The record gives the reactivity of an RNA of 177 nucleotides to DMS.
DMS adducts were read by reverse transcription with MarathonRT.
The DMS profile rests on 1,117 reads.
Conditions: 150 mM KOAc, 10 mM MgCl2 and 150 mM bicine (pH 8.5), 24 C.
RNA sequence: GGGAACGACUCGAGUAGAGUCGAAAAUCGGGGUCCCACAGUUACUGGGGGCUGUAGCAGACAUUGGAGGCCAGGCCUGUCCAUGGCACUAGAGUGAAACCCAGGUGGGGUGUGGCAUCUGCAAGGGCCAGCUAAUUUGGUUCGCCAAAUUAGCUGGAAAAGAAACAACAACAACAAC
Reactivity to DMS in 0.01 (KOAc 150mM, MgCl2 10mM, bicine 150mM(pH8.5), 24C), signal-to-noise 1, nucleotides 027 to 126: u010c090g030g030g010g020u010c000c010c000a120c100a080g020u020u000a140c050u010g010g020g040g010g000c040u010g000u020a070g010c080a070g020a100c100a060u000u020g030g010a140g020g000c040c110a120g010g010c020c030u000g000u010c060c020a060u010g000g000c130a100c040u000a080g040a140g000u000g000a090a130a200c010c020c000a080g000g000u000g030g000g000g060u000g000u010g000g010c050a070u000c020u000g000c070a060a110g000g000g000